This 177-nucleotide RNA was probed chemically with 2A3 and DMS. For DMS, 2,128 sequencing reads were counted. In probing experiments dimethyl sulfate is read out at A N1 and C N3, which are open when not base-paired. Conditions: 150 mM KOAc, 10 mM MgCl2 and 150 mM bicine (pH 8.5), 24 C.
RNA sequence: GGGAACGACUCGAGUAGAGUCGAAAAACAUUGGCCUUCGGGCCAAUGUACUGGAAAUAAAGCCGAAAGGCUACGCAUUCCUUAUUUCGCGAAAGCCUGCGAGAUUAUGUAAGUUCGCUUACAUAAAUUAAGAAGCAAGUUUCGACUUGCUUCUUAAAAAAGAAACAACAACAACAAC
Reactivity to 2A3 in 0.01 (KOAc 150mM, MgCl2 10mM, bicine 150mM(pH8.5), 24C), signal-to-noise 2, nucleotides 027 to 126: a000c000a000u000u000g000g020c000c040u030u060c270g030g020g020c000c000a000a000u000g000u000a030c040u000g030g120a020a120a070u230a150a200a040g010c000c010g020a040a020a030g000g050c010u030a010c060g020c030a040u000u030c010c010u010u080a090u060u080u050c020g020c000g030a100a040a060g150c000c020u030g000c050g000a060g020a110u050u100a020u020g000u010a010a010g000u020u120c210g010c060u000u010a000c000a020u020a000a110a010
Reactivity to DMS in 0.01 (KOAc 150mM, MgCl2 10mM, bicine 150mM(pH8.5), 24C), signal-to-noise 3, nucleotides 027 to 126: a050c010a010u000u000g000g000c010c000u000u010c220g020g030g010c000c010a010a000u000g000u000a030c120u000g000g000a030a060a070u010a080a100a030g000c010c000g010a110a090a110g010g000c000u000a030c190g010c210a100u000u000c010c010u010u000a070u000u000u000c020g030c000g000a040a030a100g000c050c020u000g000c030g010a020g010a090u010u000a010u000g010u000a000a010g010u000u010c300g010c010u000u010a000c000a000u010a010a040a130
Notes:
The data come from the RNA Mapping Database (RMDB), library M2PK50.